[RMDB]
RNA sequence: GGGAACGACUCGAGUAGAGUCGAAAAUGGCUAUAGAUAGCAAGUGAUGCAUGGGCGUCGGUGAUAUCACUUGGUACCGCGGUCAAUGCGGCAACUUUACCGGCGAUAAGGGCAGCAGCAGCAGUGGCCAUAGCGAUAGCUUCGGCUAUCGCUAUGGAAAAGAAACAACAACAACAAC
Reactivity to DMS in 0.01 (KOAc 150mM, MgCl2 10mM, bicine 150mM(pH8.5), 24C), signal-to-noise 4, nucleotides 027 to 126: u010g000g010c030u000a090u000a100g010a110u010a040g010c020a030a030g000u000g000a060u000g020c100a070u000g020g010g010c030g030u010c030g000g020u000g000a100u020a030u000c060a070c130u000u000g010g010u000a080c030c010g010c070g000g010u000c170a090a110u000g010c020g000g010c090a040a060c080u000u000u000a070c030c010g000g010c020g010a100u000a050a070g020g000g010c030a030g010c030a040g000c050a060g000c040a050g040u010g010g010
Reactivity to 2A3 in 0.01 (KOAc 150mM, MgCl2 10mM, bicine 150mM(pH8.5), 24C), signal-to-noise 1, nucleotides 027 to 126: u050g040g000c010u020a020u060a190g050a100u080a040g060c000a030a000g040u020g060a030u040g030c100a060u070g050g100g000c020g000u040c010g000g000u040g020a040u000a010u170c050a040c070u040u020g040g030u080a040c020c010g000c030g020g050u200c050a030a080u180g000c020g000g020c020a020a030c000u030u050u080a030c010c000g030g000c040g010a030u070a080a020g000g030g000c000a010g020c020a010g040c000a000g030c020a020g050u050g090g000